[RMDB]
Source information:
The record gives the reactivity of an RNA of 177 nucleotides to DMS and 2A3. For DMS, 4,018 sequencing reads were counted. Conditions: 150 mM KOAc, 10 mM MgCl2 and 150 mM bicine (pH 8.5), 24 C. As a SHAPE reagent, 2A3 marks flexible, mostly unpaired nucleotides at the ribose 2'-OH. 2A3 adducts were read by reverse transcription with SuperScript II with manganese.
RNA sequence: GGGAACGACUCGAGUAGAGUCGAAAAACUUCGGUAUGGAUUGAGCACCUGCGCGCCGCCGACGCGCGACUCGUCGAGCUGCUGGGCGAUGACGAGGCCGGUUGCCAUCCGCUCGUCAUCGAGGAGCGAAGAAUCUAAGCUUCGGCUUAGAUUCUUCAAAAGAAACAACAACAACAAC
Reactivity to DMS in 0.01 (KOAc 150mM, MgCl2 10mM, bicine 150mM(pH8.5), 24C), signal-to-noise 3, nucleotides 027 to 126: a080c080u000u000c020g010g000u000a080u010g000g010a100u000u010g010a090g020c040a100c130c050u000g030c020g010c020g010c040c030g000c050c030g000a080c050g010c050g010c010g000a050c040u000c030g030u010c020g010a140g020c040u000g010c040u010g000g010g010c010g000a020u000g010a010c000g000a030g000g010c220c020g010g010u000u000g010c180c180a090u010c000c010g000c010u000c010g000u000c020a030u000c020g000a070g010g000a090g000c170
Reactivity to 2A3 in 0.01 (KOAc 150mM, MgCl2 10mM, bicine 150mM(pH8.5), 24C), signal-to-noise 2, nucleotides 027 to 126: a000c050u050u040c040g000g020u150a160u220g130g060a080u060u180g070a020g020c020a050c040c040u120g010c030g000c040g000c030c030g050c030c000g020a030c010g010c010g000c000g040a040c030u060c060g100u020c020g020a030g020c030u060g020c030u100g040g090g000c000g030a040u050g000a000c000g000a010g030g000c140c020g010g010u050u140g090c020c010a050u010c020c010g000c010u010c010g040u030c020a040u030c060g010a020g000g060a020g080c070